[RMDB]
RNA sequence: GGGAACGACUCGAGUAGAGUCGAAAAUAGUACAUUGGAAUCGCCAUCAAGAAAAGGUCAAUACUCGUAAUGAGGCAGCAUCGUUAUUUCGUCGUUAUGUUCGUACGACUUUUGUAUGGCCACAACAACUUUUUAGUGGCUUCGGCCACUAAAAAGUAAAAGAAACAACAACAACAAC
Reactivity to DMS in 0.01 (KOAc 150mM, MgCl2 10mM, bicine 150mM(pH8.5), 24C), signal-to-noise 2, nucleotides 027 to 126: u030a120g010u000a090c150a100u050u000g020g020a100a060u000c300g020c010c030a020u000c000a080a130g000a170a020a040a010g010g010u000c020a030a090u050a050c030u000c040g000u020a030a050u020g000a010g000g000c090a120g000c090a100u020c170g020u050u020a110u000u000u000c100g000u000c050g000u010u000a030u020g000u070u010c110g000u000a020c090g000a010c030u000u000u050u030g030u010a050u020g000g000c000c120a100c090a000a040c090a050
Reactivity to 2A3 in 0.01 (KOAc 150mM, MgCl2 10mM, bicine 150mM(pH8.5), 24C), signal-to-noise 3, nucleotides 027 to 126: u190a010g120u080a000c010a110u010u190g070g040a180a080u070c060g020c040c000a030u090c130a070a080g110a150a090a040a000g080g020u030c030a070a010u070a130c080u100c000g090u120a080a080u060g040a030g090g000c010a010g000c020a070u030c010g070u140u220a220u070u270u140c060g040u020c050g040u070u100a070u130g230u070u050c050g000u010a000c020g030a010c000u070u070u100u020g110u050a050u050g000g020c000c100a060c040a110a000c000a000
Annotation: The record gives the reactivity of an RNA of 177 nucleotides to DMS and 2A3. 2A3 adducts were read by reverse transcription with SuperScript II with manganese. The data come from the RNA Mapping Database (RMDB), library OK1LIB.